[RMDB]
RNA sequence: GGGAACGACUCGAGUAGAGUCGAAAAGAUAUGGACCCGCCAGGGAGAAGCUCGGAAACGAGGCUUCGAGGAUCUGGAUGGGUCCUAAGUCAAAACAGCCCUUCGACCUUCGGGUCGAAGGGCUGAAGAUAUAUACACCGUUCGCGGUGUAUAUAUCAAAAGAAACAACAACAACAAC
Reactivity to DMS in 0.01 (KOAc 150mM, MgCl2 10mM, bicine 150mM(pH8.5), 24C), signal-to-noise 2, nucleotides 027 to 126: g010a050u010a300u010g000g000a000c000c010c000g020c000c000a030g000g000g000a020g010a010a010g010c000u000c000g000g000a080a090a220c010g030a020g010g020c000u010u000c000g000a070g010g010a010u010c000u010g000g000a040u000g030g020g010u000c000c000u000a010a030g010u010c040a100a050a120a250c020a020g010c010c000c000u010u000c000g000a060c020c000u000u010c200g000g000g050u000c010g000a010a040g000g010g000c020u000g010a000a020
Reactivity to 2A3 in 0.01 (KOAc 150mM, MgCl2 10mM, bicine 150mM(pH8.5), 24C), signal-to-noise 1, nucleotides 027 to 126: g000a030u150a090u150g000g000a000c020c000c020g010c010c000a000g040g010g000a010g020a010a000g000c020u000c030g060g020a040a100a050c010g010a020g210g130c030u000u010c020g000a080g000g000a020u010c010u010g180g000a300u100g100g000g010u000c000c000u000a010a000g000u010c020a000a010a090a130c010a000g000c000c020c030u000u040c000g060a060c040c010u160u140c300g110g000g050u000c000g020a000a000g060g160g030c000u000g000a010a000